[RMDB]
RNA sequence: GGGAACGACUCGAGUAGAGUCGAAAAACUAUGGAGAGUUUGAUCCUGGCUCAGGACGAACGCUGGCGGCGUGCCUAAUACAUGCAAGUCGAGCGGAGUAUUUCCUUCGGGGAAUGCUUAGCGGCGGGUUAUCAAUGUGGUUCGCCACAUUGAUAACAAAAGAAACAACAACAACAAC
Reactivity to DMS in 0.01 (KOAc 150mM, MgCl2 10mM, bicine 150mM(pH8.5), 24C), signal-to-noise 4, nucleotides 027 to 126: a070c040u010a130u010g010g010a170g000a060g010u000u010u010g010a110u000c020c000u000g000g000c110u010c050a060g000g010a070c070g000a070a060c040g020c040u000g010g020c080g010g000c030g020u000g010c050c040u010a100a050u010a160c070a050u000g010c060a050a100g020u000c030g000a120g040c020g010g010a020g010u000a020u000u000u000c000c000u000u010c250g020g010g000g000a010a010u000g010c010u000u000a080g010c020g000g000c020g010g000
Reactivity to 2A3 in 0.01 (KOAc 150mM, MgCl2 10mM, bicine 150mM(pH8.5), 24C), signal-to-noise 2, nucleotides 027 to 126: a000c060u060a100u170g050g040a160g010a040g140u030u070u120g110a180u060c000c000u030g150g000c070u090c130a010g000g060a030c010g000a100a030c020g020c050u010g060g030c030g000g000c030g010u040g030c010c010u080a080a030u120a080c070a040u090g020c050a120a000g020u000c030g060a020g040c050g030g000a010g010u010a010u010u010u000c020c000u020u090c120g070g000g000g020a010a010u000g010c010u020u020a030g000c000g030g000c030g030g060
This 177-nucleotide RNA was probed chemically with DMS and 2A3.
The reactions ran in a buffer of 150 mM KOAc, 10 mM MgCl2 and 150 mM bicine (pH 8.5), at 24 C.
The data come from the RNA Mapping Database (RMDB), library OK2TRN.
For 2A3 the reverse transcriptase was SuperScript II with manganese.
The DMS profile rests on 5,620 reads.